[RMDB]
RNA sequence: GGGAACGACUCGAGUAGAGUCGAAAACGCUGGGUACGGUCGGGGUCCGGGCGGGCCGGGAACGCACCCGCAGCGGCCACCAGAACCAGCGGCCCAGUAGUGCGGCGAUGGAUGGCGUCAUGAACGACAUUAUGCCGGUAUUCGUACCGGCAUAAUGAAAAGAAACAACAACAACAAC
Reactivity to DMS in 0.01 (KOAc 150mM, MgCl2 10mM, bicine 150mM(pH8.5), 24C), signal-to-noise 7, nucleotides 027 to 126: c020g000c010u000g000g000g000u010a260c210g010g000u010c130g050g020g010g020u010c030c050g010g000g010c060g010g000g010c300c010g000g010g030a110a120c040g020c130a100c010c000c010g010c050a030g010c020g010g000c010c010a050c030c040a050g010a140a300c010c000a020g010c000g010g000c000c000c000a130g010u010a070g010u000g010c050g010g000c050g000a070u000g010g010a080u010g010g000c030g010u000c050a060u010g010a060a110c090g000a210
Reactivity to 2A3 in 0.01 (KOAc 150mM, MgCl2 10mM, bicine 150mM(pH8.5), 24C), signal-to-noise 4, nucleotides 027 to 126: c010g010c020u010g010g020g080u130a050c040g010g090u130c160g050g020g020g080u070c060c000g030g020g050c060g030g000g020c090c010g010g020g030a130a030c030g000c070a050c020c030c000g030c020a010g170c010g000g000c000c000a020c010c000a010g020a050a040c000c000a000g000c010g000g000c000c000c010a020g060u090a010g020u020g060c040g020g000c030g030a050u100g060g050a060u070g080g010c010g020u060c020a040u110g050a070a020c050g090a010